RNA sequence: GGGAACGACUCGAGUAGAGUCGAAAAUUACAAGCAAAACAUGGAGUUCUGUCACAGUACUGGAACAUUCCAGCUGAUUAUGUCAAUGGUGCUAUGAUAAAUAUUUCUGACGAUGAUUUAGCGGCAACGCCACUAAACAGUUCGCUGUUUAGUGGCGAAAAGAAACAACAACAACAAC
Reactivity to DMS in 0.01 (KOAc 150mM, MgCl2 10mM, bicine 150mM(pH8.5), 24C), signal-to-noise 3, nucleotides 027 to 126: u010u000a100c080a120a120g030c080a060a050a100a090c070a100u010g010g000a070g020u000u010c080u000g010u000c040a080c050a060g020u010a030c030u000g000g000a030a070c110a130u010u000c030c050a080g000c090u010g000a080u010u000a040u020g000u000c020a050a120u000g010g020u020g000c020u000a040u010g010a030u000a060a070a060u010a090u000u000u010c030u000g020a090c120g020a060u000g000a040u000u000u000a090g020c050g010g010c120a050a120
Reactivity to 2A3 in 0.01 (KOAc 150mM, MgCl2 10mM, bicine 150mM(pH8.5), 24C), signal-to-noise 3, nucleotides 027 to 126: u080u040a060c020a050a030g050c020a000a040a040a080c030a060u080g030g010a020g040u050u000c030u010g070u040c030a030c020a210g070u100a070c030u090g040g010a110a020c010a080u180u000c030c030a000g020c030u030g030a130u060u140a070u140g050u040c030a040a070u080g030g080u050g070c020u030a040u100g050a060u080a110a150a020u180a090u040u100u010c070u050g030a050c040g040a060u040g050a040u020u060u130a030g000c000g030g000c000a020a070